[RMDB]
RNA sequence: GGGAACGACUCGAGUAGAGUCGAAAAACAACUUGGGUCAGAUCUAUGAACUCCUUCAGUUUUACCACCAUGCGCUGUAUUACUACUGGCACACCACCACGCUGCGGCCGACGGACCCACGCAUGUGGCGUAUCGGUAUAUUCGUAUACCGAUACGCAAAAGAAACAACAACAACAAC
Reactivity to 2A3 in 0.01 (KOAc 150mM, MgCl2 10mM, bicine 150mM(pH8.5), 24C), signal-to-noise 5, nucleotides 027 to 126: a000c020a000a030c020u030u060g020g010g010u040c030a020g020a230u050c040u130a160u220g070a070a040c020u050c040c000u080u070c040a040g010u020u020u060u090a040c030c020a020c010c030a040u070g020c040g000c060u050g040u130a090u110u110a090c030u030a030c020u040g060g000c040a010c010a010c060c000a020c010c000a030c020g020c030u050g010c020g020g020c010c010g020a030c020g020g020a020c010c010c000a010c010g090c020a070u130g060u090g180
Reactivity to DMS in 0.01 (KOAc 150mM, MgCl2 10mM, bicine 150mM(pH8.5), 24C), signal-to-noise 5, nucleotides 027 to 126: a080c080a070a080c060u000u000g010g000g010u000c030a050g010a120u000c090u010a090u000g010a060a060c060u000c030c030u000u000c100a050g000u000u000u000u000a100c040c030a110c110c040a050u000g000c070g020c070u000g010u000a080u000u010a090c090u010a080c080u000g010g020c070a040c070a030c050c020a060c040c030a060c060g010c020u000g030c090g000g010c020c020g010a080c100g000g010a070c040c010c030a060c100g010c090a070u010g010u000g000
This 177-nucleotide RNA was probed chemically with 2A3 and DMS. Conditions: 150 mM KOAc, 10 mM MgCl2 and 150 mM bicine (pH 8.5), 24 C. The data come from the RNA Mapping Database (RMDB), library OK2TST. For DMS, 6,576 sequencing reads were counted.